Chemical mapping of a 177-nucleotide RNA with 2A3. Reactivities are given for positions 27 through 126. Source: RMDB library RFM100, as collected in RNAgym.
RNA sequence: GGGAACGACUCGAGUAGAGUCGAAAAGUGAGAUUGUGUUUUUUAAAUGUCAUAAAAGACGUUUAUUAGAAACUGGGUUGUUGUCCCGGAGGGGAAUCUAGUUUGAAGGCACAAACGCUUUGGUGUUAUCCCAUGAACCUUUCGAGGUUCAUGGGAUAAAAGAAACAACAACAACAAC
Reactivity to 2A3 in 0.01 (KOAc 150mM, MgCl2 10mM, bicine 150mM(pH8.5), 24C), signal-to-noise 1, nucleotides 027 to 126: g010u030g020a220g020a230u010u010g030u010g010u060u130u000u000u000u000a010a010a010u000g000u000c000a000u260a240a130a040a010g010a000c000g010u020u000u030a090u010u050a100g190a020a010a000c020u020g000g000g030u090u050g220u140u120g040u100c000c030c040g060g070a050g070g000g000g030a010a010u000c000u010a030g020u000u030u000g090a050a020g000g090c000a000c000a000a220a020c050g000c050u000u040u110g060g040u090g000u050u010